[RMDB]
RNA sequence: GGGAACGACUCGAGUAGAGUCGAAAAUCACGCGGCGUUCGCGCCGCGUGAACAGCUUCCGUAGUGCAGCGGCUAGCACGUUAGGCUCAUAAUCUAAAGGUCCUUGGUUCGAAACCAUCCGGGGGCACCAGUCCGCGUUCAAAUUCGUUUGAACGCGCACCCGACACCAUUUCGAUGGUGUCGGGUGAAAAGAAACAACAACAACAAC
Reactivity to 2A3 in 0.01 (KOAc 150mM, MgCl2 10mM, bicine 150mM(pH8.5), 24C), signal-to-noise 1, nucleotides 027 to 156: u000c000a000c000g040c000g140g000c000g040u120u160c170g010c000g000c220c000g000c000g000u000g000a000a010c010a010g000c010u030u010c000c020g000u050a050g050u030g070c060a040g000c040g040g010c040u060a070g010c040a000c040g010u020u040a060g030g000c020u020c020a210u200a240a140u060c100u120a080a070a000g050g030u040c000c010u070u050g090g000u080u110c090g050a200a110a120c030c010a030u020c000c000g010g040g000g000g040c030a010c070c040a020g070u060c040c000g010c020g010u000u000c000a000a010a110u040u070c130g020u020u000u020g000a000a000c000g000c000g000